RNA sequence: GGGAACGACUCGAGUAGAGUCGAAAAAACGCUGGGAGAGCCUACCCACCAGGAUUAGAGGCAAUGACGUAUCUGAAGCGCGCACGGAUAUAAGACAGCCUAUUCUCCUGAGGGCUCUCCUGUGCUGAAGCGCGCACGGCAACCGAAAGGUGCGAAACUUCAAAACAGUGUUCGCACUGUUUUGAAGAAAAGAAACAACAACAACAAC
Reactivity to 2A3 in 0.01 (KOAc 150mM, MgCl2 10mM, bicine 150mM(pH8.5), 24C), signal-to-noise 2, nucleotides 027 to 156: a000a000c100g000c010u010g010g010g000a010g000a010g000c000c000u040a090c100c010c020a010c010c000a000g020g000a010u010u020a000g020a010g030g000c030a040a220u160g050a030c030g000u000a000u000c000u030g050a240a050g010c020g000c000g000c000a010c000g010g020a000u010a000u000a030a110g130a150c030a030g000c000c000u030a050u040u030c010u000c000c000u020g000a010g020g000g000c000u000c000u000c010c000u000g000u010g000c000u020g010a180a040g000c000g000c000g000c000a010c010g000g020c000a010a000c010c000g060a130a050a040g000g000u030g000c050g060a090a070a030
Reactivity to DMS in 0.01 (KOAc 150mM, MgCl2 10mM, bicine 150mM(pH8.5), 24C), signal-to-noise 1, nucleotides 027 to 156: a050a080c040g060c040u000g030g020g000a100g030a020g010c020c000u000a050c090c010c010a300c020c030a030g010g010a100u000u000a070g000a000g000g000c020a300a100u000g020a060c030g050u000a010u020c020u010g000a010a030g020c000g140c010g000c060a300c040g000g040a030u000a010u010a030a190g000a160c010a070g010c020c000u000a030u000u000c070u000c020c000u000g000a110g000g010g040c050u000c010u000c010c010u000g000u000g000c010u000g000a050a050g000c010g070c000g070c000a190c000g000g010c030a160a110c030c020g000a030a080a210g000g000u000g070c000g000a080a060a130